[RMDB]
RNA sequence: GGGAACGACUCGAGUAGAGUCGAAAAUUAAUUCGUCAAAUGUGUCCUACCCUUGAUGUGGAGUCCAUAGUACCUUCAACGUCUGCCGGAUACCACGAACCACUGAACCAUUUAACUCAUUAAAUCAACCUUCCUUAGGGUUCGCCCUAAGGAAGGUAAAAGAAACAACAACAACAAC
Reactivity to 2A3 in 0.01 (KOAc 150mM, MgCl2 10mM, bicine 150mM(pH8.5), 24C), signal-to-noise 5, nucleotides 027 to 126: u170u110a010a070u090u060c100g010u040c090a040a080a080u170g110u020g040u120c000c010u060a080c000c000c020u060u120g070a050u040g070u110g010g040a020g040u030c040c010a020u060a110g020u050a080c030c030u040u110c080a120a050c030g040u010c020u010g000c000c010g000g040a020u040a080c010c000a020c040g030a040a040c000c010a010c010u010g040a040a030c000c000a020u000u030u070a100a010c060u030c060a080u060u220a070a070a110u110c030a040
Reactivity to DMS in 0.01 (KOAc 150mM, MgCl2 10mM, bicine 150mM(pH8.5), 24C), signal-to-noise 1, nucleotides 027 to 126: u000u150a090a140u000u080c000g000u000c000a020a120a100u030g000u030g000u010c080c020u040a080c050c010c040u000u000g000a120u060g000u030g000g020a130g080u000c000c020a030u020a060g010u030a090c050c040u020u020c090a120a130c200g060u000c030u000g000c000c000g000g010a140u000a090c000c050a040c050g000a080a070c020c000a000c060u000g000a150a110c080c030a100u050u000u000a010a050c110u000c000a080u080u040a010a010a060u050c180a140